[RMDB]
Background: An RNA of 177 nucleotides, treated with DMS and read out base by base. The data come from the RNA Mapping Database (RMDB), library M2PK90.

RNA sequence: GGGAACGACUCGAGUAGAGUCGAAAAAGAGUACGGCCGCAAGGUUUCCGGUUGUGGAUGGCAGCGUGUGUGUCGCCCCGUCCUCUAGUGCUGGUUCUAGGGCUGGGGCGUCAGCAUCCAGGUAAAAUCCCCUAAGAAGUUUCGACUUCUUAGGGGAAAAAGAAACAACAACAACAAC
Reactivity to DMS in 0.01 (KOAc 150mM, MgCl2 10mM, bicine 150mM(pH8.5), 24C), signal-to-noise 2, nucleotides 027 to 126: a080g000a090g000u000a070c070g000g010c020c010g020c070a050a090g020g010u000u000u010c030c030g020g030u010u000g010u000g000g000a070u000g010g000c110a040g000c140g010u000g000u000g010u000g000u000c010g000c000c020c000c000g000u000c090c010u000c040u000a010g020u000g010c090u000g010g000u010u000c010u010a000g020g000g000c070u000g020g000g010g010c010g010u000c020a050g010c020a040u000c030c030a060g000g010u000a100a070a080a150
For DMS, 2,755 sequencing reads were counted. For DMS the reverse transcriptase was MarathonRT. The RNA was probed in 150 mM KOAc, 10 mM MgCl2 and 150 mM bicine (pH 8.5) at 24 C.